[RMDB]
RNA sequence: GGGAACGACUCGAGUAGAGUCGAAAACAUCGCGAUGCUCUUCAAUCAUGGAGACAUCGUGAUGAGGAUACUUUCAAAGCGCCAGCUCAAGGAGCUGGUCCUCUACUCGCCGCAACACGUCGCGCGGCGUCGCCUUAACAUUCGUGUUAAGGCGACGAAAAGAAACAACAACAACAAC
Reactivity to DMS in 0.01 (KOAc 150mM, MgCl2 10mM, bicine 150mM(pH8.5), 24C), signal-to-noise 6, nucleotides 027 to 126: c000a020u000c010g000c000g010a010u000g020c200u000c010u000u000c010a100a200u050c300a190u010g000g000a000g020a020c020a000u000c000g010u000g020a000u000g000a070g000g000a130u020a060c140u000u010u010c050a060a120a070g010c230g000c010c000a020g000c000u000c020a180a170g030g010a020g000c000u010g000g000u000c040c000u000c000u010a020c010u010c020g000c050c020g000c030a060a120c150a130c150g010u010c060g010c160g020c020g010g010
Reactivity to 2A3 in 0.01 (KOAc 150mM, MgCl2 10mM, bicine 150mM(pH8.5), 24C), signal-to-noise 9, nucleotides 027 to 126: c000a000u000c000g000c000g000a000u000g030c130u000c010u030u010c020a110a300u120c070a240u250g000g000a000g000a000c000a000u000c000g010u000g000a000u000g000a000g040g040a060u130a150c070u060u090u090c080a080a080a030g070c070g000c030c000a010g000c010u020c080a190a190g190g000a000g050c000u000g000g000u000c010c000u000c000u000a010c000u000c000g000c000c000g000c010a050a040c100a040c140g090u060c020g010c010g000c000g050g000